The record gives the reactivity of an RNA of 177 nucleotides to DMS and 2A3. The data come from the RNA Mapping Database (RMDB), library M2PK50. The RNA was probed in 150 mM KOAc, 10 mM MgCl2 and 150 mM bicine (pH 8.5) at 24 C.
RNA sequence: GGGAACGACUCGAGUAGAGUCGAAAACAGACCAAGUUCGCUUGGUCUGAAAGAAAGCGGAAAGCACCAGGGAGGGAACGUGCGGGCCGCAACCACCCAUAAAAAGUACGAUCUUCGGAUCGUACAACAAAUUUUACCAGUUCGCUGGUAAAAUUUGAAAAGAAACAACAACAACAAC
Reactivity to DMS in 0.01 (KOAc 150mM, MgCl2 10mM, bicine 150mM(pH8.5), 24C), signal-to-noise 4, nucleotides 027 to 126: c000a000g000a000c010c000a000a000g000u000u020c210g020c010u000u000g000g000u000c000u000g010a010a050a120g000a060a100a130g020c010g000g000a050a090a190g010c020a020c010c120a200g000g010g020a070g000g000g010a120a120c190g000u000g000c030g010g000g010c020c020g000c010a050a050c100c080a130c020c000c020a100u020a030a080a060a080a120g000u000a000c000g010a010u000c000u000u010c140g010g010a000u000c000g010u000a000c010a050a080
Reactivity to 2A3 in 0.01 (KOAc 150mM, MgCl2 10mM, bicine 150mM(pH8.5), 24C), signal-to-noise 5, nucleotides 027 to 126: c010a000g010a000c000c000a000a010g000u010u060c110g020c150u000u000g000g000u000c000u000g000a010a010a000g060a010a070a000g000c010g000g020a080a020a010g010c010a010c030c040a110g130g080g040a120g020g050g050a150a040c040g010u010g000c000g010g070g030c000c000g000c000a000a000c030c030a040c010c010c000a040u230a060a130a020a010a010g000u000a000c000g000a000u000c000u020u070c130g060g010a000u000c010g000u000a000c000a000a000